Conditions: 150 mM KOAc, 10 mM MgCl2 and 150 mM bicine (pH 8.5), 24 C. This 177-nucleotide RNA was probed chemically with 2A3 and DMS. 2A3 adducts were read by reverse transcription with SuperScript II with manganese. For 2A3, 997 sequencing reads were counted. Source: RMDB library OK2TST, as collected in RNAgym. Values cover nucleotides 27 to 126.
RNA sequence: GGGAACGACUCGAGUAGAGUCGAAAAAACACCAAAACCUCUGCAAACACUACCGAGGACCCUCGUUAGUCCCUGCUCUGAUCCCCUCCGACACGCUCACUUGAUAGGCAGGAUCUGCCCUCAUGUCACCUUAGGCAAGAUUCGUCUUGCCUAAGGUAAAAGAAACAACAACAACAAC
Reactivity to 2A3 in 0.01 (KOAc 150mM, MgCl2 10mM, bicine 150mM(pH8.5), 24C), signal-to-noise 1, nucleotides 027 to 126: a010a000c190a100c060c000a200a020a030a060c040c010u100c050u080g070c080a000a160a090c020a060c080u060a050c040c010g030a020g010g110a180c060c000c000u000c030g020u040u060a020g010u050c000c040c000u010g040c010u010c050u050g080a120u060c000c000c000c030u000c030c000g000a000c020a020c050g080c020u050c000a060c000u050u060g020a050u060a040g070g000c010a020g070g050a060u000c020u030g040c020c000c020u040c020a070u070g030u030c020
Reactivity to DMS in 0.01 (KOAc 150mM, MgCl2 10mM, bicine 150mM(pH8.5), 24C), signal-to-noise 3, nucleotides 027 to 126: a050a040c110a130c040c010a090a070a080a120c100c030u010c030u010g020c080a100a090a090c110a050c040u000a060c040c030g000a100g030g010a150c110c090c020u000c040g020u010u010a080g000u000c050c020c020u010g010c030u010c040u000g000a070u000c020c010c010c020u000c030c020g000a050c100a040c070g010c040u020c060a080c040u010u000g020a030u000a100g010g000c020a050g020g010a120u010c020u000g000c020c000c050u000c060a050u000g010u000c160